[RMDB]
RNA sequence: GGGAACGACUCGAGUAGAGUCGAAAAGAUAUGGAGAUCACCCAGGCAACAGCGUGGGUUCGGAAACGAACCACACGACAUGCCUGGUGAUCUCCUAAGUCAAAAGCCUAUUGUUCGCAAUAGGCAAGUAAUACUUACCGUUCGCGGUAAGUAUUACAAAAGAAACAACAACAACAAC
Reactivity to DMS in 0.01 (KOAc 150mM, MgCl2 10mM, bicine 150mM(pH8.5), 24C), signal-to-noise 6, nucleotides 027 to 126: g010a020u010a230u000g000g010a020g010a010u000c000a010c180c090c210a010g020g020c000a100a060c220a110g000c010g040u000g010g000g020u000u000c000g000g000a040a040a080c010g010a010a010c000c000a070c010a000c000g000a030c060a300u000g010c000c000u000g000g000u000g000a000u000c000u000c000c000u010a000a040g000u010c010a130a090a110a130g000c000c000u000a000u000u000g010u000u010c220g010c010a020a010u000a010g010g000c010a020a020
Reactivity to 2A3 in 0.01 (KOAc 150mM, MgCl2 10mM, bicine 150mM(pH8.5), 24C), signal-to-noise 6, nucleotides 027 to 126: g010a010u020a010u070g000g000a010g010a000u010c010a010c080c190c070a060g020g000c160a300a090c080a300g010c010g010u000g000g000g000u000u000c010g000g000a010a000a010c000g010a000a010c020c050a110c010a000c110g070a020c030a140u300g000c000c000u010g000g000u000g000a000u000c000u010c000c000u010a000a000g000u000c020a000a010a070a140g000c010c000u010a010u010u020g070u050u130c300g000c180a000a000u000a000g000g000c000a000a000

This 177-nucleotide RNA was probed chemically with DMS and 2A3. In probing experiments dimethyl sulfate is read out at A N1 and C N3, which are open when not base-paired. Values cover nucleotides 27 to 126. 2A3 adducts were read by reverse transcription with SuperScript II with manganese. For 2A3, 27,087 sequencing reads were counted.